[RMDB]
RNA sequence: GGGAACGACUCGAGUAGAGUCGAAAACAGCGCGUACUGGGCGCUCUGCCACGACCCCGCGGCCAGCGUGCCGACCGCGCCCGCAAUGCAGACGAUCACCACCAUCAAGGCGGUGUGCCCGGGCGCGUGCCAUUGACGACUUCGGUCGUCAAUGGCAAAAAGAAACAACAACAACAAC
Reactivity to 2A3 in 0.01 (KOAc 150mM, MgCl2 10mM, bicine 150mM(pH8.5), 24C), signal-to-noise 1, nucleotides 027 to 126: c020a020g010c010g000c000g020u070a300c000u010g000g020g070c020g000c010u000c000u040g010c010c020a070c070g080a090c010c020c000c020g030c030g020g010c000c000a050g020c040g050u070g000c000c030g000a040c030c010g020c000g020c000c000c000g000c030a110a090u230g000c000a010g050a050c080g000a020u040c000a010c040c010a000c020c000a020u140c160a210a070g010g000c020g000g000u020g020u030g000c000c000c000g000g000g000c000g000c000g000
Structure probing data (2A3) for a 177-nucleotide construct. For 2A3 the reverse transcriptase was SuperScript II with manganese. Source: RMDB library OK1LIB, as collected in RNAgym. High 2A3 reactivity points to a flexible backbone, as in loops and unpaired stretches. The 2A3 profile rests on 720 reads. Conditions: 150 mM KOAc, 10 mM MgCl2 and 150 mM bicine (pH 8.5), 24 C.